Chemical mapping of a 177-nucleotide RNA with DMS and 2A3. Values are in units of 0.01, from 0 to 300, in steps of 10. DMS adducts were read by reverse transcription with MarathonRT. The reactions ran in a buffer of 150 mM KOAc, 10 mM MgCl2 and 150 mM bicine (pH 8.5), at 24 C. It was measured as part of the RMDB libraries RFM100 and RFMREP.
RNA sequence: GGGAACGACUCGAGUAGAGUCGAAAAUGGAGGCUGGUGUAAGGCGAUGCGGGUGAAGGCAGGAGGCUGAUGGAGAGAGAGACUGGGGGGAAGAAAAGCCGAAAUGGAUUCACGGUGCUUGGGAUAGCUGGACUACUAAAUUCGUUUAGUAGUCCAGAAAAGAAACAACAACAACAAC
Reactivity to DMS in 0.01 (KOAc 150mM, MgCl2 10mM, bicine 150mM(pH8.5), 24C), signal-to-noise 7, nucleotides 027 to 126: u030g010g010a110g000g020c020u000g010g010u010g020u020a070a090g010g020c060g000a080u010g010c070g010g010g000u010g010a070a060g000g020c070a090g010g000a080g000g000c040u010g010a090u010g000g010a100g010a100g010a070g000a070g010a070c080u000g010g000g000g000g010g010a060a050g010a060a060a090a100g010c030c030g010a050a070a080u010g010g000a100u010u010c080a080c070g010g010u010g010c060u000u000g000g000g000a070u010a060g010
Reactivity to 2A3 in 0.01 (KOAc 150mM, MgCl2 10mM, bicine 150mM(pH8.5), 24C), signal-to-noise 6, nucleotides 027 to 126: u120g040g010a030g020g030c070u060g010g060u090g030u110a080a040g030g020c040g030a050u070g030c050g010g010g020u060g050a060a030g060g010c020a020g010g040a010g020g000c040u030g020a060u070g030g010a060g000a010g000a000g000a000g010a040c030u030g000g010g000g010g000g000a020a020g040a010a130a000a010g010c010c020g030a100a030a020u150g040g020a030u050u030c030a010c070g000g010u040g010c030u030u060g050g000g000a040u050a030g010